[RMDB]
RNA sequence: GGGAACGACUCGAGUAGAGUCGAAAAGAAGACUUUUUGGCUGUUUUUUCAAUACAACAGCAGCCAAUUUCCUUAGAAGCAGCGAUAGAUAAAACAACAACACUUUCUAAUAUCAAAAUAUUAGCAGCUAACCUUAUGCUAUUGAUAGCUCAGUUUAUCGUAUCCAGUACUUCGGUACUGGAUACGAAAAAGAAACAACAACAACAAC
Reactivity to 2A3 in 0.01 (KOAc 150mM, MgCl2 10mM, bicine 150mM(pH8.5), 24C), signal-to-noise 1, nucleotides 027 to 156: g040a050a000g110a100c010u010u060u010u040u010g000g000c000u000g130u010u030u020u000u090u230c180a210a100u230a200c090a050a000c000a030g000c010a000g000c040c040a020a020u010u020u000c000c000u050u100a040g010a260a000g010c050a000g050c030g000a010u060a050g050a050u150a140a200a030a080c030a050a020c000a000a030c050a000c080u210u140u060c020u030a020a070u000a030u100c030a050a100a300a010u060a060u020u070a010g030c020a000g050c090u080a050a030c000c000u030u110a030u220g040c000u080a000u030u110g060a010u070a040g030c020u030c100a060g000u080u080u140a150